[RMDB]
RNA sequence: GGGAACGACUCGAGUAGAGUCGAAAAUAUAAUGCGCGCUAAUGCUAAUUAGCUAAUGCUAUAUAGCGCCGAUAUUAGCGCCGGCAUUAGCAUUACGGCCGGCAUAUUAGCUAAUAUGCCGCGCGCGACAAUAGUUCGCAUUCGUGCGAACUAUUGUAAAAGAAACAACAACAACAAC
Reactivity to DMS in 0.01 (KOAc 150mM, MgCl2 10mM, bicine 150mM(pH8.5), 24C), signal-to-noise 3, nucleotides 027 to 126: u010a090u000a090a100u010g000c010g000c010g010c080u010a060a070u010g030c000u000a070a190u000u000a080g020c000u010a020a020u000g010c000u000a070u010a190u010a110g020c010g030c040c080g010a090u000a060u010u010a090g010c010g030c070c150g010g010c000a030u000u000a010g000c050a090u000u010a050c180g010g010c040c030g010g010c000a010u000a000u000u010a160g010c160u000a080a020u000a050u010g000c020c070g000c060g010c010g010c000g010
Reactivity to 2A3 in 0.01 (KOAc 150mM, MgCl2 10mM, bicine 150mM(pH8.5), 24C), signal-to-noise 2, nucleotides 027 to 126: u170a010u030a050a140u120g030c030g010c000g010c050u110a090a050u110g000c010u000a060a080u130u090a040g000c000u000a070a000u040g010c010u020a030u020a050u050a300g040c020g020c040c030g050a040u070a110u300u160a030g000c000g000c020c010g000g000c000a010u000u040a030g020c010a020u080u150a060c060g030g000c020c000g000g010c000a000u030a020u020u020a010g000c010u040a000a020u000a020u060g010c070c020g000c010g020c000g000c020g000
The record gives the reactivity of an RNA of 177 nucleotides to DMS and 2A3.
The RNA was probed in 150 mM KOAc, 10 mM MgCl2 and 150 mM bicine (pH 8.5) at 24 C.
For 2A3 the reverse transcriptase was SuperScript II with manganese.
The DMS profile rests on 2,307 reads.